An RNA of 177 nucleotides, treated with 2A3 and DMS and read out base by base. The 2A3 profile rests on 1,485 reads.
RNA sequence: GGGAACGACUCGAGUAGAGUCGAAAAUUGUGGUCAAGACCUUGGCGUAGUAUCCAACGUUGUCAAGGUUCCUAUUGACUUAACAAUGAUUGAGUUUAUGUUAUGGUGUAAGGAUGGACAGGGGAAAGUGCUAUGAACGUUUCGACGUUCAUAGCACAAAAGAAACAACAACAACAAC
Reactivity to 2A3 in 0.01 (KOAc 150mM, MgCl2 10mM, bicine 150mM(pH8.5), 24C), signal-to-noise 1, nucleotides 027 to 126: u020u030g000u010g050g000u000c010a050a000g000a020c010c000u000u000g010g000c020g050u100a050g020u020a110u090c090c060a050a020c060g090u110u080g000u000c010a000a010g000g000u020u030c000c000u030a060u050u000g030a020c000u020u050a040a010c000a020a000u080g020a090u030u170g070a080g060u080u100u080a140u110g090u040u060a060u110g000g020u040g030u050a080a040g030g000a040u010g000g040a000c010a010g000g000g020g010a000a080a030
Reactivity to DMS in 0.01 (KOAc 150mM, MgCl2 10mM, bicine 150mM(pH8.5), 24C), signal-to-noise 3, nucleotides 027 to 126: u000u010g070u000g000g010u010c000a020a100g000a050c000c010u000u010g010g000c010g020u010a190g050u000a070u020c180c200a090a060c050g010u000u030g040u000c000a000a030g010g010u000u000c150c210u000a140u000u000g010a010c010u000u020a070a050c010a010a020u000g010a130u000u000g000a090g020u020u010u010a040u020g000u010u000a090u000g000g020u010g020u000a070a130g020g000a070u000g010g000a060c100a050g000g020g010g050a050a050a080